[RMDB]
RNA sequence: GGGAACGACUCGAGUAGAGUCGAAAAUCAUGAGCUCCUUGCAGUCGGAAGUGAUCCAGAUCCUUCGAAUAGAAUCGCCAAAGACUUGCCGCAACUUCUGCUCGUUCUUGUAAUCUUCUGGCACGGACAUGAACAGCACCGUUCGCGAUGAUAUACGAAGCCUGGUAUAUUUCGAUAUACCAGGCUUAAAAGAAACAACAACAACAAC
Reactivity to DMS in 0.01 (KOAc 150mM, MgCl2 10mM, bicine 150mM(pH8.5), 24C), signal-to-noise 3, nucleotides 027 to 156: u010c080a120u010g010a080g030c020u000c030c030u020u000g010c040a120g030u010c050g040g000a240a090g030u000g010a110u000c030c030a300g010a040u010c010c020u000u010c040g020a240a180u000a090g000a020a070u010c020g040c050c020a030a120a190g010a060c020u010u010g020c020c060g000c040a140a060c050u000u000c030u000g010c030u010c070g010u000u000c030u000u020g000u000a100a090u000c030u000u000c020u020g010g020c040a070c060g000g020a070c050a110u010g000a070a090c040a080g030c060a110c100c040g010u000u000c010g000c010g010a110u000g000a070u010a140u000a090c040g010
Reactivity to 2A3 in 0.01 (KOAc 150mM, MgCl2 10mM, bicine 150mM(pH8.5), 24C), signal-to-noise 2, nucleotides 027 to 156: u020c000a020u060g020a000g030c020u010c030c020u020u140g000c010a020g020u040c020g000g050a060a010g020u000g060a000u000c010c020a070g000a050u000c010c020u180u210c120g040a060a010u100a090g020a030a020u030c020g020c030c040a150a060a000g010a000c020u060u100g040c020c000g000c010a020a000c050u130u110c030u060g020c010u030c040g020u000u030c010u000u090g020u030a070a080u020c050u080u000c000u060g010g010c040a020c140g010g020a010c010a030u060g000a050a010c000a020g000c000a000c020c030g000u010u050c060g000c020g010a050u040g050a020u020a050u050a130c130g060